[RMDB]
Conditions: 150 mM KOAc, 10 mM MgCl2 and 150 mM bicine (pH 8.5), 24 C.
Chemical mapping of a 207-nucleotide RNA with DMS and 2A3.
Values cover nucleotides 27 to 156.
DMS adducts were read by reverse transcription with MarathonRT.
RNA sequence: GGGAACGACUCGAGUAGAGUCGAAAAUCCUAAGUCGCAGGCAACGAGGAUGCGUGGAGAACCUCGGAAACGAGGUUCGUUGAAACGCAUCUACCCACCGUUGCACUGCGAUAUGGAAAAACCUACAGCAUGAACGUUCGCGUUCAUGCUGUAGGAAACCAAUUGUCUACUUCGGUAGACAAUUGGUAAAAGAAACAACAACAACAAC
Reactivity to DMS in 0.01 (KOAc 150mM, MgCl2 10mM, bicine 150mM(pH8.5), 24C), signal-to-noise 1, nucleotides 027 to 156: u030c000c000u010a050a200g000u010c000g010c000a060g050g030c010a000a010c050g020a080g030g000a030u000g000c010g050u020g000g000a150g020a010a060c000c060u030c010g010g030a150a090a300c020g040a080g030g010u010u000c000g030u000u000g010a300a300a040c010g010c000a000u010c030u000a070c000c040c020a300c070c040g020u000u020g000c000a050c050u020g010c010g030a000u000a060u010g000g000a040a130a070a140a110c000c000u000a000c010a000g000c000a020u000g040a010a020c000g000u000u000c300g010c030g050u010u000c000a000u000g020c000u000g000u010a000g000g030a010a060
Reactivity to 2A3 in 0.01 (KOAc 150mM, MgCl2 10mM, bicine 150mM(pH8.5), 24C), signal-to-noise 1, nucleotides 027 to 156: u010c000c000u020a080a040g050u020c010g030c010a000g000g000c000a000a000c000g020a050g000g010a000u020g000c010g010u010g000g010a000g000a000a000c010c010u000c000g010g050a040a060a050c000g000a020g020g050u000u000c000g000u000u020g010a000a000a000c000g000c010a010u000c000u020a040c060c070c010a070c030c020g000u000u000g000c060a150c050u010g010c000g000a000u000a030u000g000g040a000a130a000a020a030c000c000u010a010c000a000g000c000a000u000g000a010a000c000g070u060u100c170g010c000g140u030u000c030a000u000g000c000u020g000u010a000g000g000a000a000